[RMDB]
An RNA of 207 nucleotides, treated with DMS and 2A3 and read out base by base.
For DMS, 22,171 sequencing reads were counted.
It was measured as part of the RMDB library OK3TST.

RNA sequence: GGGAACGACUCGAGUAGAGUCGAAAAAACCGUGGUGCGCCGUCUCGGCAACGAACAUCCGCGUUGCCUCGUCGUAACGGAACGCGACGUUCUCGUUGCCCUCAUUGUCGAGAUCGAUGGAAGCAAUGAUGUUGCCCGCUUGAUCCCGCCACGUAGAACGUAUAUUUUAUUUCGAUAAAAUAUACGUAAAAGAAACAACAACAACAAC
Reactivity to DMS in 0.01 (KOAc 150mM, MgCl2 10mM, bicine 150mM(pH8.5), 24C), signal-to-noise 4, nucleotides 027 to 156: a040a030c040c000g000u000g010g020u010g030c040g020c050c030g020u000c020u000c050g000g020c010a010a010c000g010a070a060c030a070u000c050c060g050c010g010u000u000g000c000c020u000c080g010u000c170g010u000a090a130c050g010g010a030a040c020g020c020g010a030c030g000u000u000c060u000c010g030u000u000g020c000c020c050u000c020a070u000u000g030u000c040g020a110g010a070u000c010g010a070u000g010g010a110a060g000c020a060a060u010g020a150u000g000u000u000g010c020c020c050g010c100u000u000g010a110u000c030c010c010g000c010c000a020c030g020u000a150g020a150
Reactivity to 2A3 in 0.01 (KOAc 150mM, MgCl2 10mM, bicine 150mM(pH8.5), 24C), signal-to-noise 9, nucleotides 027 to 156: a000a000c060c010g000u020g010g000u060g020c120g020c080c050g070u030c060u060c100g000g000c010a000a010c010g010a020a010c010a050u100c080c030g020c040g020u020u080g300c020c010u100c060g220u080c080g060u100a120a040c090g000g000a010a000c010g010c010g020a020c070g020u070u030c060u010c050g010u000u020g010c000c010c010u060c020a110u090u130g080u100c060g040a050g010a130u080c070g030a030u120g040g020a070a050g010c030a030a050u130g050a080u200g090u120u040g020c020c030c030g030c060u020u080g020a030u040c010c020c010g010c000c000a010c010g020u030a040g070a090